[RMDB]
RNA sequence: GGGAACGACUCGAGUAGAGUCGAAAAGUGAUUUUCUGGUUAUUGCUUAUUUUAGGAUUAAGCUCAAUAUAAAACUGUGGGGAUAAAGACGGACAAGCGGAAUUAUCUUAUAAAAAAAGCCGAUGUGACACACCAUAAGAUUCGUCUUAUGGUGUGUAAAAGAAACAACAACAACAAC
Reactivity to 2A3 in 0.01 (KOAc 150mM, MgCl2 10mM, bicine 150mM(pH8.5), 24C), signal-to-noise 3, nucleotides 027 to 126: g130u070g070a100u020u010u060u040c010u010g190g000u030u020a090u120u050g010c010u030u030a110u030u100u170u190a060g030g020a060u120u000a050a010g010c010u040c130a150a030u060a060u090a040a170a030a000c060u050g050u100g060g040g000g000a020u090a160a090a050g040a010c050g070g020a030c010a090a030g080c000g040g000a000a020u050u040a020u080c030u030u060a080u180a090a160a110a040a010a000a000g050c110c010g050a020u140g050u080g090
Reactivity to DMS in 0.01 (KOAc 150mM, MgCl2 10mM, bicine 150mM(pH8.5), 24C), signal-to-noise 4, nucleotides 027 to 126: g000u030g010a110u020u000u010u010c010u010g000g010u010u000a030u020u010g000c020u010u000a040u000u040u000u050a090g010g000a080u000u010a030a060g020c040u020c090a050a070u010a100u010a060a060a080a070c090u000g010u000g020g010g020g010a090u000a030a060a070g000a100c100g000g000a070c100a060a080g000c020g020g000a100a080u020u010a050u010c040u000u020a110u040a000a000a060a040a070a090a140g000c040c110g000a090u010g000u020g010